[RMDB]
RNA sequence: GGGAACGACUCGAGUAGAGUCGAAAAGGUCAAUGUUGAGAAUUGGGUCCCACGCAACGGAAAUUCAUGAACUCCGUCAGGUCCGGAAGGAAGCAGCGGUAAGUGAAAUCUUCCGUGUGCCGUGGAUAAAUCUGAUUUGAGUUGACCAGGUGAGUAAUCUAAGUGUCAUGUUCGCAUGACACUUAGAAAAAGAAACAACAACAACAAC
Reactivity to DMS in 0.01 (KOAc 150mM, MgCl2 10mM, bicine 150mM(pH8.5), 24C), signal-to-noise 2, nucleotides 027 to 156: g000g000u000c030a030a060u030g030u000u000g000a140g000a040a030u000u010g000g040g030u010c110c000c000a020c020g040c020a080a030c010g050g000a020a040a150u000u010c010a080u000g010a070a300c220u010c030c000g010u000c030a300g030g010u000c010c030g130g010a130a180g050g000a100a060g000c040a270g000c030g010g000u000a130a290g030u000g010a020a010a060u000c110u000u000c000c000g040u010g000u000g070c040c090g010u000g000g010a050u000a020a020a010u000c000u000g020a000u000u010u000g010a090g020u000u010g000a020c010c030a120g030g010u000g010a110g010u010a120a140
Reactivity to 2A3 in 0.01 (KOAc 150mM, MgCl2 10mM, bicine 150mM(pH8.5), 24C), signal-to-noise 2, nucleotides 027 to 156: g000g000u000c010a000a010u040g070u130u150g240a070g020a050a000u010u000g020g020g000u040c010c010c000a000c000g000c000a000a000c000g010g020a000a010a000u020u010c000a010u040g020a060a050c040u010c060c010g090u060c010a000g000g020u000c010c010g000g110a120a080g020g010a000a000g000c010a000g000c020g000g000u020a090a000g010u000g020a060a040a060u050c060u010u000c000c010g020u050g170u040g000c120c050g000u010g000g000a000u030a040a060a000u000c000u000g020a030u000u010u020g050a050g000u010u010g000a010c000c010a010g050g060u100g040a100g030u140a050a070